[RMDB]
RNA sequence: GGGAACGACUCGAGUAGAGUCGAAAAAUUUCGGUCCUAUGCAAUAUGAACCCAUGAACCAUGUCAGGUCCUGACGGAAGCAGCAUUAAGUGGAUCCUCAUAUGUGCCGUAGGGUAGCCGAGAUUUAAAGACCCACCAUGUUCGCAUGGUGGGUCUUAAAAGAAACAACAACAACAAC
Reactivity to 2A3 in 0.01 (KOAc 150mM, MgCl2 10mM, bicine 150mM(pH8.5), 24C), signal-to-noise 1, nucleotides 027 to 126: a000u090u000u000c140g080g030u300c000c000u010a010u020g000c000a010a010u010a000u000g000a020a050c000c000c000a000u000g040a000a010c100c040a000u000g020u060c000a000g090g000u000c000c030u200g100a040c040g000g000a010a000g000c000a000g030c000a000u000u000a040a040g040u070g000g000a020u020c020c020u000c000a030u000a000u070g300u000g080c060c030g020u000a000g000g000g000u020a020g000c000c010g010a010g000a000u000u000u000a000